[RMDB]
RNA sequence: GGGAACGACUCGAGUAGAGUCGAAAAUUCGCGACGCAGCCCCCCGGCCGUGGAUGCUGCACUCGGGCUCGGGAUCCGCCCAGGUAGCCGGCCUCGGACCCAGGUCCUGCGCCCAGGUCCUCCCCUGUGGUCUUACCUUUUUCGAAAGGUAAGACCAAAAAGAAACAACAACAACAAC
Reactivity to 2A3 in 0.01 (KOAc 150mM, MgCl2 10mM, bicine 150mM(pH8.5), 24C), signal-to-noise 3, nucleotides 027 to 126: u050u010c020g000c010g030a020c000g020c040a060g020c020c000c000c000c000c000g030g000c010c040g050u080g000g030a040u110g020c010u010g030c030a020c040u060c040g030g000g010c020u020c030g020g010g020a040u040c020c010g010c020c000c000a000g040g010u030a030g040c040c040g040g000c000c010u030c010g070g010a100c020c020c020a010g020g020u020c000c050u040g010c010g000c020c000c000a020g030g020u000c000c010u030c020c000c000c020u050g060
Reactivity to DMS in 0.01 (KOAc 150mM, MgCl2 10mM, bicine 150mM(pH8.5), 24C), signal-to-noise 2, nucleotides 027 to 126: u000u020c040g000c040g040a050c060g000c080a090g020c010c010c020c010c020c050g000g040c080c040g000u010g020g000a120u010g010c050u000g000c050a080c080u020c080g010g020g020c010u000c030g000g000g010a060u000c010c050g020c050c010c040a080g000g030u000a110g010c030c090g000g010c030c020u000c060g010g020a070c060c030c080a170g000g010u000c000c030u000g030c150g000c020c010c000a090g010g000u010c010c010u000c020c000c000c000u010g030

Chemical mapping of a 177-nucleotide RNA with 2A3 and DMS. Conditions: 150 mM KOAc, 10 mM MgCl2 and 150 mM bicine (pH 8.5), 24 C. For 2A3, 3,226 sequencing reads were counted.